[RMDB]
RNA sequence: GGGAACGACUCGAGUAGAGUCGAAAACUCUCACCCAAAUCGAUCAAGAAAAUUGGCAAGCUCUAGGCUACGUAGAAGCACCACAAGCCAUCUAUGGCUUAGAAAAUAUGCUCUAUGUUCAACAAGAAGCUCAAUCUGAAUUCGUUCAGAUUGAGCUAAAAGAAACAACAACAACAAC
Reactivity to 2A3 in 0.01 (KOAc 150mM, MgCl2 10mM, bicine 150mM(pH8.5), 24C), signal-to-noise 2, nucleotides 027 to 126: c020u000c000u010c030a090c010c010c000a030a070a030u130c040g090a070u090c040a140a040g080a090a210a080a050u090u090g020g000c060a030a020g030c070u060c040u080a030g010g100c030u050a000c020g000u020a000g030a160a020g000c010a010c050c000a050c030a030a020g000c000c020a080u090c070u140a220u110g020g000c000u020u020a050g080a010a140a000a020u180a050u070g010c010u010c020u020a020u030g000u050u120c020a100a110c010a030a100g130a040
Reactivity to DMS in 0.01 (KOAc 150mM, MgCl2 10mM, bicine 150mM(pH8.5), 24C), signal-to-noise 2, nucleotides 027 to 126: c160u000c000u000c060a190c030c060c010a030a130a180u000c080g010a030u000c090a050a080g000a150a050a090a110u010u000g030g000c100a050a050g090c100u000c140u000a110g010g000c040u000a080c030g000u000a010g010a120a010g000c010a050c100c130a140c170a050a010g010c000c000a060u010c210u010a040u000g030g010c010u010u000a010g020a130a070a050a070u000a060u000g010c020u000c020u000a020u010g000u010u010c080a050a060c240a060a050g010a080